[RMDB]
RNA sequence: GGGAACGACUCGAGUAGAGUCGAAAAGAAAACAAGUACCGAGAACAUUGUUUUCGCUGCUUGGCGUUGCCGUUUUGUGUUGCAGUUGGUUGGGUAACGCCGCAAAUACCAACAGAACAGAAAGAUACGUACGAUUAAUGUUCGCAUUAAUCGUACGAAAAGAAACAACAACAACAAC
Reactivity to DMS in 0.01 (KOAc 150mM, MgCl2 10mM, bicine 150mM(pH8.5), 24C), signal-to-noise 4, nucleotides 027 to 126: g010a050a050a110a100c040a010a000g030u000a050c300c010g010a060g000a040a030c020a190u010u020g010u000u000u000u000c020g000c190u000g020c010u000u010g000g010c030g000u000u000g000c010c010g030u010u000u030u000g000u010g010u010u010g000c170a100g000u000u010g010g000u000u010g010g000g000u020a050a080c300g000c000c020g000c090a040a050a080u040a060c010c000a000a000c020a090g010a050a060c140a060g000a090a040a080g000a140u020a120
Reactivity to 2A3 in 0.01 (KOAc 150mM, MgCl2 10mM, bicine 150mM(pH8.5), 24C), signal-to-noise 4, nucleotides 027 to 126: g050a000a010a000a010c020a000a050g030u020a030c060c080g040a070g030a070a020c070a270u080u220g000u000u000u000u000c000g010c020u040g010c000u030u100g000g000c010g000u010u000g020c000c000g050u050u020u100u150g190u030g020u060u130g100c080a090g010u030u050g050g010u020u090g100g000g000u000a030a010c030g030c020c000g000c010a020a020a000u160a030c010c010a010a010c010a060g080a050a010c040a030g190a080a130a000g100a060u180a130